[RMDB]
RNA sequence: GGGAACGACUCGAGUAGAGUCGAAAAGAACACGUCUCGGGACGACGCUAAACUCGCCCUGAUCGGGAUGGGUUUAACGACCCCUCGGGUUUCCUAGUUCCUAAAACUAGGUGGUGGAGUCAUAUAAAAAACUUCUACACGUUCGCGUGUAGAAGAACAUUUGGUAAGCGUUCGCGCUUACCAAAUGAAAAGAAACAACAACAACAAC
Reactivity to DMS in 0.01 (KOAc 150mM, MgCl2 10mM, bicine 150mM(pH8.5), 24C), signal-to-noise 1, nucleotides 027 to 156: g020a080a090c050a020c010g000u000c020u000c050g020g010g030a030c010g020a120c020g020c060u000a100a070a060c180u020c010g000c000c000c040u010g020a080u000c140g020g000g010a060u000g010g000g080u020u010u010a040a140c010g000a120c000c000c000c020u000c090g030g010g010u000u000u000c010c000u000a040g010u000u000c020c060u000a060a080a030a070c020u000a020g000g020u020g000g000u000g000g020a250g050u000c050a130u010a110u040a000a040a090a070a040a090c010u000u000c000u000a000c020a000c000g000u000u000c250g020c020g070u000g020u000a000g000a000a000g010a050a070
Reactivity to 2A3 in 0.01 (KOAc 150mM, MgCl2 10mM, bicine 150mM(pH8.5), 24C), signal-to-noise 1, nucleotides 027 to 156: g040a080a040c070a000c060g010u000c020u010c020g060g010g030a110c300g020a040c030g030c230u020a010a010a010c010u020c030g060c060c000c000u070g060a160u090c060g000g040g020a100u090g070g030g000u030u040u080a090a020c050g050a030c000c010c000c010u020c010g000g010g000u000u040u000c010c000u000a000g010u000u060c010c010u110a050a040a010a010c000u020a040g000g000u010g020g000u030g030g040a070g020u110c030a040u140a010u260a140a100a010a000a030a040c000u010u000c000u010a000c000a000c000g020u050u040c190g020c000g130u000g020u000a010g020a000a000g000a010a000
This 207-nucleotide RNA was probed chemically with DMS and 2A3. It was measured as part of the RMDB library M2RFPK. The DMS profile rests on 2,149 reads. For 2A3 the reverse transcriptase was SuperScript II with manganese. The 2A3 profile rests on 1,145 reads.